[RMDB]
RNA sequence: GGGAACGACUCGAGUAGAGUCGAAAAAUACACCAGCAGUAGGACUCAGCGACCGUCACAACAAGGUUGUGCUGGUAUCCGACGGUCGUAUAGCCCUGUCUUGCAGCUUGCCUUGCACUGACGUGCCACACCAUUUACAGAUUCGUCUGUAAAUGAAUCUUGUAGCACUAUUCGUAGUGCUACAAGAAAAAGAAACAACAACAACAAC
Reactivity to DMS in 0.01 (KOAc 150mM, MgCl2 10mM, bicine 150mM(pH8.5), 24C), signal-to-noise 2, nucleotides 027 to 156: a090u010a080c070a220c030c020a090g080c020a060g000u000a030g030g010a060c000u000c050a170g020c020g010a020c010c000g000u010c020a220c090a100a100c140a070a090g020g030u000u000g020u000g030c000u000g020g000u000a050u000c070c020g030a050c010g020g020u000c010g000u000a060u000a040g010c010c020c010u000g020u000c050u010u000g000c070a090g000c040u010u000g010c020c050u010u010g030c010a080c050u020g030a100c110g000u010g020c000c030a080c040a160c110c010a010u000u000u000a000c000a010g010a040u000u000c300g000u010c010u000g010u000a000a010a020u000g000a080a070
Reactivity to 2A3 in 0.01 (KOAc 150mM, MgCl2 10mM, bicine 150mM(pH8.5), 24C), signal-to-noise 4, nucleotides 027 to 156: a000u120a010c070a010c000c000a000g020c000a010g050u190a010g020g020a020c020u000c050a000g000c000g010a000c010c010g020u010c030a060c040a220a200c070a250a170g040g010u020u010g020u010g030c000u010g020g010u010a030u020c010c040g000a000c000g000g000u020c000g000u020a020u040a030g010c000c000c000u010g040u060c030u030u070g010c030a040g010c020u110u140g030c020c030u060u070g000c020a060c060u080g030a040c060g040u090g050c010c010a110c000a020c030c010a010u000u000u000a000c000a000g010a010u000u090c120g140u000c080u000g000u010a000a000a000u020g020a010a050